[RMDB]
RNA sequence: GGGAACGACUCGAGUAGAGUCGAAAAGAAGAUGCCCUAGUCAUUGUGAAUGAAGACAGCACUCCUACUUCUGAGUUUAUUAAAUCUCGUGACUGGUAUGCGCCUAUUACCGAUUUAAUUGACCGUACGAUCCGCAUGGUUUCGACCAUGCGGAUCGAAAAGAAACAACAACAACAAC
Reactivity to 2A3 in 0.01 (KOAc 150mM, MgCl2 10mM, bicine 150mM(pH8.5), 24C), signal-to-noise 1, nucleotides 027 to 126: g050a010a010g040a070u060g040c000c000c050u010a040g000u060c040a040u140u120g070u110g130a110a100u040g030a070a000g070a030c040a000g110c010a000c000u010c000c000u030a150c030u140u150c050u130g080a000g110u070u010u000a090u030u110a040a050a020u020c000u010c010g000u000g050a020c030u000g000g040u130a120u200g200c270g050c000c000u040a070u050u030a010c000c050g000a000u060u000u080a020a070u040u070g030a040c000c080g030u030a070
Reactivity to DMS in 0.01 (KOAc 150mM, MgCl2 10mM, bicine 150mM(pH8.5), 24C), signal-to-noise 1, nucleotides 027 to 126: g020a090a040g010a120u000g000c000c050c040u000a080g000u020c030a040u000u000g010u000g000a120a020u000g010a100a090g030a050c080a140g000c080a130c100u010c010c020u000a070c030u000u010c030u000g030a110g020u000u000u000a090u010u000a010a050a040u010c020u000c180g000u010g030a000c090u000g030g010u000a040u000g010c300g030c010c020u010a030u000u000a030c040c180g000a030u000u040u000a040a050u000u000g020a040c000c090g000u000a130
The record gives the reactivity of an RNA of 177 nucleotides to 2A3 and DMS.
Reactivities are rounded to 0.1 and cut off at 0 and 3.
The reactions ran in a buffer of 150 mM KOAc, 10 mM MgCl2 and 150 mM bicine (pH 8.5), at 24 C.
Reactivities are given for positions 27 through 126.
Source: RMDB library OK2TST, as collected in RNAgym.
The DMS profile rests on 839 reads.